[RMDB]
RNA sequence: GGGAACGACUCGAGUAGAGUCGAAAAGAUGGUGAUUUGGCCCUUUAGUUUUGAGGUUGGUGUACUGUGUGUGAGUACACAUAUUUAUCACACACAGUCACUAUCCUCGAAACUAAGGGUGCACAUCCUUCUUCAAACACUUCGGUGUUUGAAGAAGAAAAGAAACAACAACAACAAC
Reactivity to DMS in 0.01 (KOAc 150mM, MgCl2 10mM, bicine 150mM(pH8.5), 24C), signal-to-noise 4, nucleotides 027 to 126: g010a080u000g010g010u020g000a140u000u020u010g010g000c020c000c000u030u000u000a000g020u000u010u000u010g000a000g000g010u010u000g010g020u000g020u040a010c000u000g010u000g010u000g010u000g000a020g000u020a100c300a120c290a080u010a040u040u020u020a110u000c000a020c000a010c000a000c010a000g000u000c000a000c000u000a010u000c000c000u000c000g000a000a000a000c000u000a010a000g000g000g020u010g020c010a060c050a050u000c030
Reactivity to 2A3 in 0.01 (KOAc 150mM, MgCl2 10mM, bicine 150mM(pH8.5), 24C), signal-to-noise 9, nucleotides 027 to 126: g080a040u170g010g110u110g070a170u070u070u200g090g010c000c000c000u030u060u040a000g000u010u000u000u000g000a000g000g010u030u040g020g000u020g040u140a040c000u000g000u000g000u000g000u000g000a020g110u220a050c120a000c030a090u090a090u100u170u080a060u020c000a000c000a000c000a000c000a000g000u000c000a000c000u000a000u010c000c000u000c000g000a000a000a000c000u000a000a000g000g000g010u030g000c000a000c000a020u000c000

Structure probing data (DMS and 2A3) for a 177-nucleotide construct. It was measured as part of the RMDB libraries RFM100 and RFMREP. Conditions: 150 mM KOAc, 10 mM MgCl2 and 150 mM bicine (pH 8.5), 24 C.